[RMDB]
Conditions: 150 mM KOAc, 10 mM MgCl2 and 150 mM bicine (pH 8.5), 24 C.
Structure probing data (2A3 and DMS) for a 207-nucleotide construct.
The DMS profile rests on 16,487 reads.
Reactivities are rounded to 0.1 and cut off at 0 and 3.
Reactivities are given for positions 27 through 156.
It was measured as part of the RMDB library RNAMAK.
DMS (dimethyl sulfate) methylates the pairing face of unpaired adenines and cytosines.

RNA sequence: GGGAACGACUCGAGUAGAGUCGAAAACCAUGGUUCGCCAUGGAGAUCCUAAGUCCUUGCCGAGCAGGAGAUUACCAUCGAUCUGACUCGGAAACGAGUCAGGGAGGUAAUGUCCUGCGAUGAGGCAAGGAUAUGGACAGUCGUCACUUCGGUGACGUGGAUAUAGAUUUUUCGAAAUCUAUAUCCAAAAAGAAACAACAACAACAAC
Reactivity to 2A3 in 0.01 (KOAc 150mM, MgCl2 10mM, bicine 150mM(pH8.5), 24C), signal-to-noise 5, nucleotides 027 to 156: c000c000a000u000g010g030u070u100c300g040c090c010a000u010g010g010a020g030a160u020c000c000u020a100a040g020u000c000c000u010u000g000c000c000g030a030g020c010a000g010g010a020g010a000u010u000a000c020c020a120u300c040g020a040u000c000u000g000a000c000u000c000g010g000a020a030a010c010g000a000g000u000c000a000g000g000g000a020g020g000u000a000a010u010g080u030c010c000u000g000c000g000a000u010g030a010g000g010c000a000a000g000g010a000u000a000u010g010g000a020c040a060g180u200c000g010u060c000a010c020u080u120c240g140g000u010g000a010c010g030
Reactivity to DMS in 0.01 (KOAc 150mM, MgCl2 10mM, bicine 150mM(pH8.5), 24C), signal-to-noise 4, nucleotides 027 to 156: c010c000a010u000g010g010u000u000c300g020c010c000a030u010g010g010a080g000a180u000c000c010u000a080a210g020u000c000c010u000u000g020c000c000g000a210g010c000a020g000g000a050g010a030u000u000a020c010c010a300u000c180g010a070u010c000u000g000a020c010u010c000g010g010a040a090a200c010g010a010g010u000c010a020g000g000g000a020g020g010u000a000a010u000g000u000c000c010u000g010c010g010a030u010g020a270g010g020c010a010a010g010g010a010u000a030u000g000g010a050c040a230g000u010c000g010u000c020a010c000u000u010c300g040g010u000g020a020c010g030